[RMDB]
RNA sequence: GGGAACGACUCGAGUAGAGUCGAAAACAGAAAAAGUCGUGUCAGAAGGUAUGUGUGCUGCUGAAAUGUGAUUAGACAGUUAGUGAAAUACCUCUAUAUAAAAGUGUGGGUAGCCGGCUUUUUGUCGGUUUUGUAGGAAAUUCGUUUCCUACAAAACAAAAGAAACAACAACAACAAC
Reactivity to 2A3 in 0.01 (KOAc 150mM, MgCl2 10mM, bicine 150mM(pH8.5), 24C), signal-to-noise 3, nucleotides 027 to 126: c010a010g140a020a040a010a010a000g030u030c050g010u060g060u180c050a010g060a140a010g120g000u030a010u010g150u030g090u110g010c000u010g000c030u010g060a050a090a080u240g070u130g060a220u070u130a050g050a070c010a010g030u170u230a010g010u120g060a090a080a000u010a010c000c000u000c010u040a130u000a020u080a130a210a110a090g070u120g020u080g060g100g020u050a020g010c020c000g000g000c000u030u040u010u040u070g090u050c030g020
Reactivity to DMS in 0.01 (KOAc 150mM, MgCl2 10mM, bicine 150mM(pH8.5), 24C), signal-to-noise 6, nucleotides 027 to 126: c060a150g000a050a030a040a040a040g020u000c020g010u000g010u000c100a100g020a160a050g000g010u000a010u000g010u010g040u010g010c000u000g000c010u000g000a060a100a100u010g010u010g010a150u010u010a100g010a240c020a020g000u000u010a030g010u000g000a090a130a040u000a020c010c000u000c040u000a080u010a110u000a070a080a060a140g000u010g020u010g010g000g010u000a120g000c040c010g000g000c010u000u000u000u000u000g000u000c060g000